[RMDB]
RNA sequence: GGGAACGACUCGAGUAGAGUCGAAAACACUUUAUCAGAUUCUUUACGGCAAGCAUUGGAUUUGGAAAAGUUAUACCUGCUGGGAUUGACCCUUUAAGGUUUUAUGAAAAUGGGGUAGAAUGUGUGUCUAGGUGGGGAUGGAGGAUGCGUGGAGAGGGGUUAGAGCCAUAUUCGUAUGGCUCUAACCAAAAGAAACAACAACAACAAC
Reactivity to 2A3 in 0.01 (KOAc 150mM, MgCl2 10mM, bicine 150mM(pH8.5), 24C), signal-to-noise 1, nucleotides 027 to 156: c010a020c010u010u060u050a100u060c010a000g030a160u070u010c000u110u060u090a100c070g110g000c130a130a030g020c010a050u020u170g000g030a040u050u020u100g000g000a060a080a000a010g010u040u080a040u090a220c000c000u040g000c000u020g040g010g040a050u090u170g090a160c000c010c000u020u030u010a030a010g020g060u060u100u040u030a060u070g080a030a050a060a060u100g010g000g010g000u040a000g060a110a140u030g050u030g010u000g010u000c020u040a050g000g020u030g020g030g030g000a010u070g000g010a000g000g030a000u070g010c030g010u030g010g000a090g000a010g040g070